[RMDB]
The record gives the reactivity of an RNA of 207 nucleotides to 2A3 and DMS.
In probing experiments dimethyl sulfate is read out at A N1 and C N3, which are open when not base-paired.
The 2A3 profile rests on 1,375 reads.
It was measured as part of the RMDB library OK3TST.
For DMS the reverse transcriptase was MarathonRT.
RNA sequence: GGGAACGACUCGAGUAGAGUCGAAAAUAAAACAUAAUCAAUUGCACAAACACUCUAUCGACAUACUAAGGUAUCUACUAGAUAGGUUCGAUAUUCAGAAAGACGAAUACUAUAAUACCAUGACUCCUCUUCAUGCCGCCUUCCAGAAUUGUAACAACCAGUUACUCAGAUUCGUCUGAGUAACUGGAAAAGAAACAACAACAACAAC
Reactivity to 2A3 in 0.01 (KOAc 150mM, MgCl2 10mM, bicine 150mM(pH8.5), 24C), signal-to-noise 3, nucleotides 027 to 156: u120a010a060a010a000c060a050u240a090a060u100c040a040a100u100u180g030c070a050c000a060a100a020c010a050c060u110c040u070a070u050c050g040a010c040a070u120a040c040u110a050a060g020g010u030a060u080c030u090a100c010u040a030g020a150u040a040g030g040u080u000c010g000a010u000a110u180u100c020a030g140a210a170a010g070a040c010g020a020a030u050a090c010u020a000u050a160a070u060a080c030c000a030u050g060a060c020u000c010c000u000c000u050u060c000a030u080g010c010c010g040c010c020u030u000c040c000a010g080a080a120u080u060g040u090a040a010c000a020a040
Reactivity to DMS in 0.01 (KOAc 150mM, MgCl2 10mM, bicine 150mM(pH8.5), 24C), signal-to-noise 1, nucleotides 027 to 156: u000a040a100a170a140c040a070u010a070a070u000c020a010a080u000u010g020c000a040c030a070a080a110c000a040c040u020c020u000a010u010c030g010a050c070a090u000a040c050u000a070a050g050g020u020a050u000c040u000a070c040u000a080g020a190u010a020g020g000u000u010c010g030a030u000a090u000u000c110a250g000a020a130a100g010a180c030g020a070a020u000a110c030u070a070u000a040a140u000a040c040c020a070u020g040a090c030u000c030c020u000c050u020u010c010a050u000g030c000c020g020c030c040u000u000c030c020a050g030a040a070u010u000g020u000a040a030c080a120a150